[RMDB]
RNA sequence: GGGAACGACUCGAGUAGAGUCGAAAAGCUUCCAGUGCCAACAGCGGCAAGGUCGCUACCACUCUGUCGCGCUUGAAGAUGACAGCCGCUGUGAGGCUGGAGUUGCCCUGUUGCAUAGCAGGCGUGGGAGAUAGUCUGUCUUCGGACAGACUAUCUCAAAAGAAACAACAACAACAAC
Reactivity to DMS in 0.01 (KOAc 150mM, MgCl2 10mM, bicine 150mM(pH8.5), 24C), signal-to-noise 2, nucleotides 027 to 126: g010c070u000u010c000c030a030g010u010g000c050c130a160a040c000a010g000c020g020g000c010a160a100g020g000u000c040g040c050u000a110c090c090a100c080u030c030u010g030u020c070g000c080g010c090u010u000g020a230a050g010a090u000g020a050c050a040g020c010c000g000c010u000g010u000g000a140g010g000c000u000g010g010a030g000u010u010g000c030c000c020u010g010u010u010g010c060a120u000a070g010c070a040g020g010c080g020u000g030g010
Reactivity to 2A3 in 0.01 (KOAc 150mM, MgCl2 10mM, bicine 150mM(pH8.5), 24C), signal-to-noise 1, nucleotides 027 to 126: g020c000u230u100c000c020a020g000u130g300c060c020a020a000c000a070g000c000g010g000c050a080a140g150g030u180c050g000c030u060a070c010c010a090c060u100c110u100g070u040c000g000c030g050c110u010u130g110a130a070g060a180u200g040a050c020a020g030c000c000g000c000u010g020u020g010a060g030g000c030u000g020g000a010g030u010u150g060c010c010c000u070g000u080u100g050c150a190u150a080g030c040a030g130g010c030g070u090g020g080